[RMDB]
RNA sequence: GGGAACGACUCGAGUAGAGUCGAAAAGCACAAGUCUGGAUCCUUCUGGCCAAGGCUGUUACGGCACCGGAUACGGCAGCUGACUCAGAAUUGAGAAGGUGGGUUAAAUAUACACAACAAAGGAGAGGUCAUUAUCAGUAUUCGUACUGAUAAUGACAAAAGAAACAACAACAACAAC
Reactivity to 2A3 in 0.01 (KOAc 150mM, MgCl2 10mM, bicine 150mM(pH8.5), 24C), signal-to-noise 6, nucleotides 027 to 126: g050c030a030c020a100a070g040u010c030u050g030g020a050u040c020c000u040u040c030u060g040g000c030c020a060a040g050g000c020u040g020u070u100a040c050g020g000c040a030c040c030g020g010a100u130a130c020g030g000c010a030g000c010u020g020a030c000u000c040a070g100a200a170u160u090g020a060g010a080a030g060g020u050g020g030g010u010u030a020a070a000u140a010u070a030c030a000c010a050a120c030a050a110a010g090g030a110g030a030g020
Reactivity to DMS in 0.01 (KOAc 150mM, MgCl2 10mM, bicine 150mM(pH8.5), 24C), signal-to-noise 8, nucleotides 027 to 126: g020c080a080c110a090a080g010u010c040u000g010g000a100u010c030c040u000u010c050u000g000g010c090c040a080a130g000g010c030u000g010u010u000a120c070g010g000c050a120c050c050g020g010a110u000a090c080g000g000c040a090g010c030u000g010a210c090u000c030a050g010a070a100u000u000g010a070g010a070a080g000g010u010g000g000g010u000u000a030a060a110u000a100u000a060c060a050c070a040a050c090a050a070a090g010g000a110g000a120g010